Notes
Source: RMDB library M2RFPK, as collected in RNAgym. The record gives the reactivity of an RNA of 207 nucleotides to 2A3. The reactions ran in a buffer of 150 mM KOAc, 10 mM MgCl2 and 150 mM bicine (pH 8.5), at 24 C.
RNA sequence: GGGAACGACUCGAGUAGAGUCGAAAAACACCAAAACUGAAAACGGAAGGCAAUCCUUCCACGACGUUACUUACUUUCCUUUGAUCGUCGUUACUACUGGCAUAGCCACAAAGGAGAACAAACAUGAGCGCGGACACUGACUUCGGUCAGUGUCCAACUACGUCAUCACGUUCGCGUGAUGACGUAGAAAAGAAACAACAACAACAAC
Reactivity to 2A3 in 0.01 (KOAc 150mM, MgCl2 10mM, bicine 150mM(pH8.5), 24C), signal-to-noise 1, nucleotides 027 to 156: a000c010a070c030c050a110a040a000a000c170u250g130a000a000a000a160c120g050g000a000a000g050g000c100a000a170u200c000c000u000u000c000c000a000c000g020a010c020g070u140u070a090c010u090u020a030c000u150u070u030c000c050u060u030u040g030a020u080c000g070u010c000g010u000u120a080c070u090a060c040u010g000g060c050a160u090a130g000c010c000a020c010a000a010a000g060g000a040g050a090a000c060a020a150a000c020a080u130g070a070g070c170g000c080g010g000a000c000a020c000u000g000a000c000u030u020c190g000g000u000c000a000g020u010g000u000c000c000a000a000

Values cover nucleotides 27 to 156.